[RMDB]
RNA sequence: GGGAACGACUCGAGUAGAGUCGAAAAUUUAAGCAGUUCAACGAACAGAUGAAACAAGAUGGCUUUGAGAUUGUUCUGGAGCAGGAAACCAAAAAUGAUCCAUCGAAAGAAAAGUAUAUCUACUCGGUAACUAUCUCAGUAAAACAGAUUCACACAAGCGUACAAAUUAGUUCGCUAAUUUGUACGCAAAAGAAACAACAACAACAAC
Reactivity to 2A3 in 0.01 (KOAc 150mM, MgCl2 10mM, bicine 150mM(pH8.5), 24C), signal-to-noise 3, nucleotides 027 to 156: u150u190u130a090a020g010c040a020g020u040u050c070a080a020c080g050a040a030c030a020g080a090u060g060a110a020a050c040a040a040g040a060u030g030g000c020u100u050u060g030a050g000a020u090u070g030u060u010c040u080g040g010a050g030c010a030g000g050a060a030a070c030c010a020a000a030a060a060u060g010a010u020c030c010a010u010c040g070a030a060a050g050a010a100a030a000g030u060a050u000a010u150c010u010a030c000u000c010g040g030u040a040a010c020u010a020u040c020u010c020a020g030u090a000a060a000a000c030a020g070a110u120u130c030a030c020a000c000a100a070
Reactivity to DMS in 0.01 (KOAc 150mM, MgCl2 10mM, bicine 150mM(pH8.5), 24C), signal-to-noise 2, nucleotides 027 to 156: u010u000u010a060a110g050c060a120g000u000u010c040a110a140c070g000a100a050c080a100g040a100u000g000a110a140a180c040a140a100g020a070u020g010g020c080u000u000u000g000a140g000a080u000u020g010u010u010c050u020g040g010a060g050c110a100g000g000a050a130a130c020c010a030a060a060a040a080u000g000a090u000c040c040a050u000c040g040a090a110a120g000a110a020a040a090g010u000a110u020a090u000c030u000a010c020u000c030g040g030u000a040a060c020u000a070u010c050u000c040a140g010u000a090a070a040a030c030a090g020a150u000u000c030a060c050a040c120a070a300